[RMDB]
RNA sequence: GGGAACGACUCGAGUAGAGUCGAAAAGAUAUGGAUGUUUCUGCAGAGACAUACUACCUGGAGAAGUACUCGGAAACGAGUAUACUUCGAUGAAAGGUCGUAUGUCUCUGCAGAAACAUCCUAAGUCCUUCUUAUACGUGUUCGCACGUAUAAGAAGAAAAGAAACAACAACAACAAC
Reactivity to DMS in 0.01 (KOAc 150mM, MgCl2 10mM, bicine 150mM(pH8.5), 24C), signal-to-noise 3, nucleotides 027 to 126: g010a100u000a300u000g010g010a010u010g000u000u000u000c000u010g010c010a020g000a030g000a010c000a000u000a010c010u000a020c010c010u000g030g020a060g010a020a000g020u000a010c010u010c000g010g000a150a150a250c010g020a020g020u000a120u000a040c000u000u000c000g010a130u020g000a180a150a030g000g010u000c070g010u000a000u000g000u000c010u000c000u000g000c000a000g000a000a010a010c000a000u000c000c000u000a020a070g010u000c040

An RNA of 177 nucleotides, treated with DMS and read out base by base. The DMS profile rests on 4,068 reads. DMS adducts were read by reverse transcription with MarathonRT. Source: RMDB library TTRINS, as collected in RNAgym. Reactivities are given for positions 27 through 126.